Structure probing data (DMS and 2A3) for a 177-nucleotide construct. Values cover nucleotides 27 to 126. For 2A3 the reverse transcriptase was SuperScript II with manganese. For DMS, 934 sequencing reads were counted. It was measured as part of the RMDB library OK2TST.
[RMDB]
RNA sequence: GGGAACGACUCGAGUAGAGUCGAAAAGGCACACAUCUAUAAGAAGACACAUAUUUGGUACUCUAAGAUGAUACUUUUUUUUAAUGCCAAAAUGUGAGGGUCAGCAUAAAUUGCCAAGGCAUGGUAACAUGGAUAUCCCGUUCGCGGGAUAUCCAUGAAAAGAAACAACAACAACAAC
Reactivity to DMS in 0.01 (KOAc 150mM, MgCl2 10mM, bicine 150mM(pH8.5), 24C), signal-to-noise 1, nucleotides 027 to 126: g000g000c040a040c130a100c070a030u000c060u020a140u020a120a100g000a120a080g020a180c000a000c090a090u000a190u000u000u000g010g020u000a020c200u000c100u000a050a010g000a030u000g000a160u000a040c040u000u000u000u040u000u000u000u010a050a080u020g010c000c030a020a030a020a050u000g040u000g000a090g000g000g000u010c040a060g020c030a070u000a030a040a070u000u020g010c020c020a060a050g040g010c020a040u010g040g020u000a070a130
Reactivity to 2A3 in 0.01 (KOAc 150mM, MgCl2 10mM, bicine 150mM(pH8.5), 24C), signal-to-noise 1, nucleotides 027 to 126: g050g000c020a050c020a000c000a080u000c090u110a110u020a150a050g150a020a000g070a020c050a000c020a050u120a300u160u020u020g000g020u000a020c030u000c010u090a040a010g010a020u100g000a060u210a200c050u210u050u010u030u000u000u010u120a060a050u020g000c000c000a000a000a000a000u030g050u000g020a070g060g000g000u040c040a000g000c000a050u130a200a150a080u110u050g050c020c010a090a070g040g000c020a030u020g000g060u060a050a000